[RMDB]
RNA sequence: GGGAACGACUCGAGUAGAGUCGAAAAUAGGUCUUGCCAUUGCGUCUUGUGUCUCUUGCUGUACAGGUGGAAACAUCUGUGUGUUUUCAUUAUGGUGACCGCUGGGUAACUGGUCGCCAACCUCUGUAACUGAAGAAACAGCCCUCACAAUAGAGUACUAUUUAAGCACUUUCGAGUGCUUAAAUAGAAAAGAAACAACAACAACAAC
Reactivity to 2A3 in 0.01 (KOAc 150mM, MgCl2 10mM, bicine 150mM(pH8.5), 24C), signal-to-noise 4, nucleotides 027 to 156: u120a030g040g000u020c010u040u090g030c020c010a080u040u140g020c040g060u030c040u050u110g030u010g040u010c000u000c000u080u070g030c030u040g020u090a040c020a020g020g030u030g020g020a040a050a010c010a020u040c100u100g110u090g010u020g040u140u020u020u030c050a060u040u150a100u180g000g000u010g000a000c020c000g030c090u150g030g080g000u050a140a060c060u110g010g000u000c000g010c000c020a010a040c010c030u060c010u030g030u050a070a050c020u050g060a050a010g040a060a120a010c000a020g020c000c020c000u070c000a090c020a020a120u150a090g110a030g070u140a040
Reactivity to DMS in 0.01 (KOAc 150mM, MgCl2 10mM, bicine 150mM(pH8.5), 24C), signal-to-noise 2, nucleotides 027 to 156: u010a070g000g010u000c030u010u010g010c030c040a180u000u000g020c040g020u000c020u010u010g060u010g000u000c010u000c020u000u010g030c040u020g020u000a070c030a080g000g040u020g000g010a060a040a060c010a040u000c110u000g000u000g050u000g010u000u000u000u000c010a050u000u000a060u000g040g040u010g000a050c050c010g050c030u000g020g000g020u000a080a090c050u020g040g030u010c050g020c020c010a040a050c070c020u010c020u010g020u010a090a160c050u000g020a070a080g000a110a070a050c040a100g020c030c030c010u000c020a030c070a060a130u010a110g000a120g010u010a200